Conditions: 150 mM KOAc, 10 mM MgCl2 and 150 mM bicine (pH 8.5), 24 C. Chemical mapping of a 177-nucleotide RNA with 2A3 and DMS.

[RMDB]
RNA sequence: GGGAACGACUCGAGUAGAGUCGAAAAAGCCUCGAUUACGAUCGAGGCAUGAGAUGAAGAAAAAGCACCUCCACUGAGUGAUGAUGACACGCCCACGGUCUGAUCAGCAGCGGAUACGUCCGCUGCACCGGAAAUCUUAGUUCGCUAAGAUUUCCGGAAAAGAAACAACAACAACAAC
Reactivity to 2A3 in 0.01 (KOAc 150mM, MgCl2 10mM, bicine 150mM(pH8.5), 24C), signal-to-noise 3, nucleotides 027 to 126: a000g000c000c000u000c000g000a010u020u060a060c200g020a000u010c010g010a000g000g020c010a020u030g020a010g020a030u180g060a100a170g080a100a090a020a010a000g040c010a010c000c000u030c030c010a070c100u040g030a020g120u070g030a110u080g000a040u080g000a040c010a000c050g030c020c010c010a030c030g050g030u040c040u040g040a090u050c060a030g000c000a000g010c010g000g000a000u020a030c240g160u000c000c000g000c000u010g000c000a000
Reactivity to DMS in 0.01 (KOAc 150mM, MgCl2 10mM, bicine 150mM(pH8.5), 24C), signal-to-noise 1, nucleotides 027 to 126: a080g000c000c000u000c050g030a010u000u000a120c220g030a060u000c020g000a020g000g040c000a020u000g010a060g000a160u010g030a010a070g010a100a070a110a030a090g000c010a040c040c000u000c050c100a100c020u000g050a080g030u000g000a020u010g040a060u010g010a120c030a010c050g050c060c000c000a100c040g000g000u010c020u020g000a090u030c090a050g050c030a000g000c000g020g010a050u030a070c130g030u000c020c000g010c000u000g010c000a020
In probing experiments dimethyl sulfate is read out at A N1 and C N3, which are open when not base-paired. For 2A3, 1,722 sequencing reads were counted. The data come from the RNA Mapping Database (RMDB), library RFM100.